RNA sequence: GGGAACGACUCGAGUAGAGUCGAAAAGAUAUGGACAGAACUACAAGGACCGGCAGCGUUGAAAUCGGAAACGAUGGAGCUGCCUAGUACUUGCUGUCCUAAGUCAAAACACGUGUUCGCACGUGAAGGUGGUGAUAUACUUCGGUAUAUCACCACCAAAAGAAACAACAACAACAAC
Reactivity to 2A3 in 0.01 (KOAc 150mM, MgCl2 10mM, bicine 150mM(pH8.5), 24C), signal-to-noise 2, nucleotides 027 to 126: g010a030u070a050u160g000g000a000c010a000g000a080a080c100u260a070c300a040a010g000g000a010c000c030g030g020c020a000g000c010g300u300u090g030a060a010a000u020c000g000g070a110a060a000c010g000a010u040g040g020a020g010c000u000g000c000c000u020a000g000u000a000c000u010u000g000c020u000g000u000c020c000u000a110a000g040u030c040a050a000a220a010c000a000c010g000u010g040u140u090c280g040c100a000c020g000u010g100a050a050
Reactivity to DMS in 0.01 (KOAc 150mM, MgCl2 10mM, bicine 150mM(pH8.5), 24C), signal-to-noise 2, nucleotides 027 to 126: g010a020u010a300u000g000g000a000c010a030g030a080a080c040u020a300c010a040a000g000g000a100c280c190g010g000c000a010g010c000g020u010u010g010a090a130a020u000c000g010g010a060a150a130c020g000a030u000g000g010a050g030c000u000g010c000c000u000a030g010u000a110c010u000u000g020c000u000g000u000c000c000u000a000a100g000u020c010a060a100a080a180c010a010c020g020u010g020u000u020c130g030c010a000c000g030u000g000a050a070
The record gives the reactivity of an RNA of 177 nucleotides to 2A3 and DMS. For 2A3, 2,823 sequencing reads were counted. The data come from the RNA Mapping Database (RMDB), library TTRDEL. For DMS, 1,210 sequencing reads were counted.